[RMDB]
RNA sequence: GGGAACGACUCGAGUAGAGUCGAAAACAUUGCUUCAUUGGCUAACAUACUCUUUAGACAAGCUCUUCAACUCAGUUCUGUGCCUGGUGCACAGCAGGCUCCGGCUGCAUGUUAGUUCCAGCCAUCUUGCACAUUUGCAUCUCCUUCCUGGAGAAGGAGUGAAGAGCAUAUUCGUAUGCUCUUCACUAAAAGAAACAACAACAACAAC
Reactivity to 2A3 in 0.01 (KOAc 150mM, MgCl2 10mM, bicine 150mM(pH8.5), 24C), signal-to-noise 9, nucleotides 027 to 156: c050a080u080u170g020c020u090u100c040a130u060u150g040g000c020u040a060a020c020a060u170a110c030u070c040u140u140u130a070g030a070c070a100a030g010c030u020c020u130u080c060a080a100c050u030c080a040g030u240u070c010u040g010u020g020c000c020u120g110g000u160g020c020a020c010a050g020c000a010g020g010c020u020c070c050g030g000c010u010g020c020a070u060g040u070u110a080g020u100u070c030c010a020g020c020c010a070u060c040u040u060g030c040a030c020a170u130u090u160g030c010a060u020c040u030c040c000u020u040c010c030u100g080g000a260g000a060a020g020g020
Reactivity to DMS in 0.01 (KOAc 150mM, MgCl2 10mM, bicine 150mM(pH8.5), 24C), signal-to-noise 4, nucleotides 027 to 156: c070a150u000u010g000c010u000u010c050a170u000u000g020g020c020u000a060a080c060a120u010a070c050u000c040u010u000u000a100g010a090c050a070a090g030c050u000c030u000u000c040a050a090c040u020c030a130g020u000u000c030u010g040u000g010c000c010u010g030g040u010g030c020a030c030a060g010c040a050g020g030c030u010c030c040g000g000c010u000g030c060a060u000g030u000u000a080g000u000u000c050c020a080g030c060c020a070u000c030u000u010g040c010a090c110a200u010u000u000g030c040a100u010c010u000c020c000u000u000c040c060u000g010g020a240g010a020a040g020g000

An RNA of 207 nucleotides, treated with 2A3 and DMS and read out base by base. 2A3 adducts were read by reverse transcription with SuperScript II with manganese. The data come from the RNA Mapping Database (RMDB), library OK3TST. The RNA was probed in 150 mM KOAc, 10 mM MgCl2 and 150 mM bicine (pH 8.5) at 24 C.